[RMDB]
RNA sequence: GGGAACGACUCGAGUAGAGUCGAAAAAAGCUCCACGUCAACGCCGGCGGCGCUGACGUGUUCCUGCCGGUCUGCGACGUGCUGGAGCAAGACCUCGCCGAGCGCGACGAGGAGGUACGCCAGCUGAUAUGCUUCGAUUAUUCGUAAUCGAAGCAUAAAAAGAAACAACAACAACAAC
Reactivity to DMS in 0.01 (KOAc 150mM, MgCl2 10mM, bicine 150mM(pH8.5), 24C), signal-to-noise 6, nucleotides 027 to 126: a090a070g010c040u010c020c010a060c010g010u010c010a060a290c190g000c000c010g000g020c070g010g000c070g020c010u010g010a140c260g020u010g010u000u000c030c010u010g040c020c000g000g000u010c020u000g020c290g010a030c020g020u000g010c090u010g000g000a050g010c020a070a120g010a130c020c010u000c020g010c010c010g010a160g030c200g010c030g000a020c020g000a030g010g010a070g010g010u000a060c110g000c020c010a090g010c060u000g000a180
Reactivity to 2A3 in 0.01 (KOAc 150mM, MgCl2 10mM, bicine 150mM(pH8.5), 24C), signal-to-noise 3, nucleotides 027 to 126: a000a010g020c010u020c010c010a000c010g000u000c010a020a030c010g010c000c000g050g000c060g030g000c050g000c030u170g170a120c130g040u040g000u030u030c000c010u050g000c010c000g050g040u180c040u090g020c020g000a010c000g030u030g010c060u100g030g010a020g010c000a000a020g040a020c010c000u020c010g060c020c010g080a140g130c150g010c030g040a060c020g010a020g060g000a000g010g050u040a030c040g020c040c010a030g000c040u040g030a030
The record gives the reactivity of an RNA of 177 nucleotides to DMS and 2A3.
The 2A3 profile rests on 4,825 reads.
2A3 adducts were read by reverse transcription with SuperScript II with manganese.